Chemical mapping of a 207-nucleotide RNA with 2A3 and DMS.
Values cover nucleotides 27 to 156.

RNA sequence: GGGAACGACUCGAGUAGAGUCGAAAAUGUAAAGAAUGGAAGUAGCUGUAUGAGCAGUUCAAAGGCCAAGCCGUGGAAUGGUAGCAAUGGGAUAUAAUACCUUUCUAAGGGAAACAUUUGUAUCAGUAUCAUUUGAUCUGCCAUGGACAUGUGUUUAUCCAUGAUGGUAGUUCGCUACCAUCAUGGAAAAAGAAACAACAACAACAAC
Reactivity to 2A3 in 0.01 (KOAc 150mM, MgCl2 10mM, bicine 150mM(pH8.5), 24C), signal-to-noise 3, nucleotides 027 to 156: u110g000u040a020a020a040g090a070a030u070g050g040a080a020g000u060a000g010c080u040g030u090a050u130g090a060g040c010a010g000u060u030c070a040a040a040g040g000c020c040a040a000g000c000c020g010u010g000g040a060a020u020g010g010u020a000g040c030a040a070u030g020g060g010a010u010a000u020a050a050u040a040c010c000u060u070u070c150u240a080a060g030g000g000a060a100a000c030a040u010u020u070g010u000a030u010c030a010g060u100a040u160c010a020u040u040u110g030a030u020c010u010g000c020c010a020u020g040g080a030c000a020u030g080u000g040u050u070u040a100
Reactivity to DMS in 0.01 (KOAc 150mM, MgCl2 10mM, bicine 150mM(pH8.5), 24C), signal-to-noise 2, nucleotides 027 to 156: u030g000u010a090a080a120g010a150a070u000g010g010a050a070g000u010a060g000c020u010g040u000a110u000g000a130g030c030a040g000u020u000c030a080a110a220g030g050c030c010a080a090g010c020c040g070u000g020g000a150a040u000g010g040u010a060g040c070a040a090u000g000g000g000a020u000a060u000a030a110u000a090c040c040u000u010u000c080u000a080a060g020g000g000a100a100a120c070a110u020u010u000g050u000a040u010c000a130g030u000a090u000c030a090u010u000u000g050a030u010c040u000g020c030c040a080u030g010g010a040c060a140u000g000u010g010u000u000u010a140
The 2A3 profile rests on 1,965 reads. Reactivities are rounded to 0.1 and cut off at 0 and 3. DMS adducts were read by reverse transcription with MarathonRT.